[RMDB]
Record summary:
The record gives the reactivity of an RNA of 207 nucleotides to 2A3 and DMS. For 2A3, 3,626 sequencing reads were counted. The reactions ran in a buffer of 150 mM KOAc, 10 mM MgCl2 and 150 mM bicine (pH 8.5), at 24 C.
RNA sequence: GGGAACGACUCGAGUAGAGUCGAAAAGAGCGAUUAGACAAAGGGGUAGAGCUACAUAUUAGAUAGCUGUAUAAUCGUUCAAGUUACAUCAAAACAUCUUCAGUAUUUAUUACUUACUUUCCUUUCUGCCAGAGUACGGUAUUCGUACCGUACUCAAGAGAUUAAAUAUCUUCGGAUAUUUAAUCUCAAAAGAAACAACAACAACAAC
Reactivity to 2A3 in 0.01 (KOAc 150mM, MgCl2 10mM, bicine 150mM(pH8.5), 24C), signal-to-noise 6, nucleotides 027 to 156: g010a000g000c010g000a000u010u010a040g030a070c070a060a130a060g040g030g010g040u070a040g010a010g060c000u020a010c020a100u300a170u170u170a080g150a290u020a010g040c010u000g010u030a040u010a010a010u020c000g000u000u000c010a030a000g040u050u120a070c050a090u170c090a080a130a080a060c040a070u070c080u270u140c070a030g020u030a130u060u180u070a110u090u120a040c010u040u030a040c010u030u080u080c010c000u060u070u050c030u070g040c030c030a030g000a000g000u000a000c000g010g000u000a010u010u030c020g020u010a000c000c000g000u000a000c000u000c000a000a000
Reactivity to DMS in 0.01 (KOAc 150mM, MgCl2 10mM, bicine 150mM(pH8.5), 24C), signal-to-noise 1, nucleotides 027 to 156: g060a040g050c020g000a040u010u000a010g000a100c090a060a090a100g000g020g000g050u000a060g080a090g010c030u000a030c020a130u000a300u000u010a130g000a240u010a040g020c010u020g010u020a050u020a050a000u010c030g010u010u000c010a080a110g000u000u000a050c050a130u010c070a070a120a080a130c030a070u000c060u000u000c050a110g000u000a050u000u010u000a090u060u000a060c070u000u000a060c060u010u000u000c040c010u000u000u000c050u010g000c080c090a190g000a030g000u000a000c000g020g020u000a020u000u010c300g000u000a020c010c010g020u000a010c000u000c010a000a030